[RMDB]
RNA sequence: GGGAACGACUCGAGUAGAGUCGAAAACAUCCACUGCUACGGCAGUGGAUGAACGAGGUAGGUACGCCUACCUCGAAAGGCGGAUGUGGUCAUACACAUUAAACGUCCAUGGUACGCCAUGGACGAACGUUUUAAUGGGCUUCGGCCCAUUAAAACGAAAAGAAACAACAACAACAAC
Reactivity to 2A3 in 0.01 (KOAc 150mM, MgCl2 10mM, bicine 150mM(pH8.5), 24C), signal-to-noise 1, nucleotides 027 to 126: c000a000u060c000c000a000c020u000g000c000u000a090c210g150g020c000a000g000u000g020g020a000u000g000a010a020c030g000a000g010g020u000a000g020g040u020a020c210g080c030c010u030a000c000c000u000c020g000a010a010a000g100g070c110g070g010a030u050g020u020g020g020u030c080a090u040a250c030a020c000a030u060u140a050a150a030c000g000u010c000c000a010u030g000g020u060a030c280g010c050c010a020u000g000g000a000c000g000a000a000
Reactivity to DMS in 0.01 (KOAc 150mM, MgCl2 10mM, bicine 150mM(pH8.5), 24C), signal-to-noise 1, nucleotides 027 to 126: c040a020u000c000c000a130c000u010g000c000u000a070c180g020g000c000a060g000u010g000g020a010u010g020a050a160c050g050a000g030g000u000a000g010g030u030a030c300g050c010c000u000a000c000c000u010c000g000a060a050a050g000g000c040g000g010a070u000g030u000g000g000u060c220a130u000a180c000a010c040a010u000u000a010a090a170c000g000u000c000c010a010u000g000g010u000a260c300g000c010c020a000u000g010g000a010c020g000a060a040